[RMDB]
Chemical mapping of a 177-nucleotide RNA with 2A3 and DMS. Source: RMDB library OK1LIB, as collected in RNAgym. Reactivities are given for positions 27 through 126. The RNA was probed in 150 mM KOAc, 10 mM MgCl2 and 150 mM bicine (pH 8.5) at 24 C.

RNA sequence: GGGAACGACUCGAGUAGAGUCGAAAACGUCAACAGUUAUCUGUAUCUCGCCUUGAAGGAUAUAAAGGCGACAUUAGAACGAGAUUGGACAAGCUUUUCGAUUACCAUCGGAAAACAGGGAGAGGAGGCUGGUAAUCAAGUUCGCUUGAUUACCAGCAAAAGAAACAACAACAACAAC
Reactivity to 2A3 in 0.01 (KOAc 150mM, MgCl2 10mM, bicine 150mM(pH8.5), 24C), signal-to-noise 5, nucleotides 027 to 126: c030g010u050c030a070a040c010a070g050u140u130a120u180c010u000g080u060a060u030c030u000c000g000c000c010u040u010g080a110a090g150g100a090u110a040u090a290a030a020g000g000c020g020a020c010a030u110u140a030g030a100a020c050g010a010g080a210u000u070g100g020a020c010a080a030g030c010u000u050u050u050c020g020a040u010u160a160c020c060a050u010c000g000g000a000a020a020a090c080a090g000g000g020a050g000a030g050g000a010g140
Reactivity to DMS in 0.01 (KOAc 150mM, MgCl2 10mM, bicine 150mM(pH8.5), 24C), signal-to-noise 3, nucleotides 027 to 126: c040g010u000c060a140a040c130a050g020u040u010a090u010c030u020g010u000a060u010c200u020c030g040c010c010u010u000g040a070a170g010g010a130u060a010u010a040a030a010g010g020c000g030a010c180a010u000u030a000g010a080a090c090g020a030g030a060u070u020g000g020a020c070a020a100g000c140u000u000u000u000c010g000a020u000u040a060c300c100a220u000c000g000g000a000a020a010a090c060a150g000g000g000a080g010a050g000g010a100g030